[RMDB]
RNA sequence: GGGAACGACUCGAGUAGAGUCGAAAAGAUAUGGAUCUGUAUCACUUCGAUAAGCCUAACUGCAGUUCAUAUCGGAAACGAUAUGAACUGCAGUUAAGGCUUUUGACGAAGGAUCAGAUCCUAAGUCGAAUUGAGAUAAGUUCGCUUAUCUCAAUUCAAAAGAAACAACAACAACAAC
Reactivity to DMS in 0.01 (KOAc 150mM, MgCl2 10mM, bicine 150mM(pH8.5), 24C), signal-to-noise 5, nucleotides 027 to 126: g010a110u010a300u000g000g010a010u000c000u000g020u020a020u000c000a160c010u000u000c000g020a190u000a020a020g010c000c000u000a030a010c000u000g000c000a010g010u000u000c000a010u000a000u000c010g010g000a140a100a220c000g010a000u000a010u000g000a000a010c000u000g010c000a000g000u000u000a010a060g010g010c000u000u000u000u000g020a180c160g000a020a000g010g000a030u000c000a010g000a010u000c010c000u000a010a080g010u010c130
Reactivity to 2A3 in 0.01 (KOAc 150mM, MgCl2 10mM, bicine 150mM(pH8.5), 24C), signal-to-noise 2, nucleotides 027 to 126: g080a020u130a050u280g010g000a010u010c040u030g120u200a030u010c120a140c300u020u000c000g100a100u020a090a000g010c000c000u000a000a030c000u000g000c000a010g020u080u000c010a010u000a010u030c030g000g020a190a100a010c020g000a000u000a000u020g010a000a090c000u000g000c000a000g000u000u000a000a010g000g000c000u000u000u000u000g000a010c020g010a010a010g010g000a000u000c000a000g010a000u010c000c000u000a080a010g150u100c130